[RMDB]
This 177-nucleotide RNA was probed chemically with DMS and 2A3.
RNA sequence: GGGAACGACUCGAGUAGAGUCGAAAAUAGGGGACCAGGACCUCAGUGAGGCCCCAGAAAGCACCCGGGAGGGGCCUCCGAUCCUGCCUGGGAGGGAGGGGUUAGAGGAGGAUUCCUGGAAGAAGGACUUUUUUCCAUGUUUCGACAUGGAAAAAAGAAAAGAAACAACAACAACAAC
Reactivity to DMS in 0.01 (KOAc 150mM, MgCl2 10mM, bicine 150mM(pH8.5), 24C), signal-to-noise 1, nucleotides 027 to 126: u010a080g020g030g000g030a150c080c000a000g000g000a050c000c070u010c050a060g030u040g030a000g000g020c040c000c000c000a050g000a150a180a160g050c070a020c000c080c000g030g000g030a300g000g040g030g000c000c060u000c000c010g010a100u010c030c010u020g000c050c050u000g000g000g000a110g010g000g010a130g000g000g000g000u000u010a030g000a060g000g000a040g000g000a080u020u000c010c000u000g010g010a140a070g000a150a130g000g000a260
Reactivity to 2A3 in 0.01 (KOAc 150mM, MgCl2 10mM, bicine 150mM(pH8.5), 24C), signal-to-noise 2, nucleotides 027 to 126: u190a050g030g020g000g030a050c040c010a010g000g000a000c000c070u080c020a030g060u050g160a000g010g000c000c030c000c000a020g100a000a050a000g080c070a030c040c030c030g000g080g020a040g020g040g000g060c010c000u000c000c000g000a000u060c010c000u010g070c020c000u010g040g050g040a170g060g050g010a300g000g000g000g040u060u110a050g050a070g120g050a010g010g060a130u050u050c010c050u010g040g020a020a010g020a000a040g060g010a000
It was measured as part of the RMDB library RFM100. DMS adducts were read by reverse transcription with MarathonRT.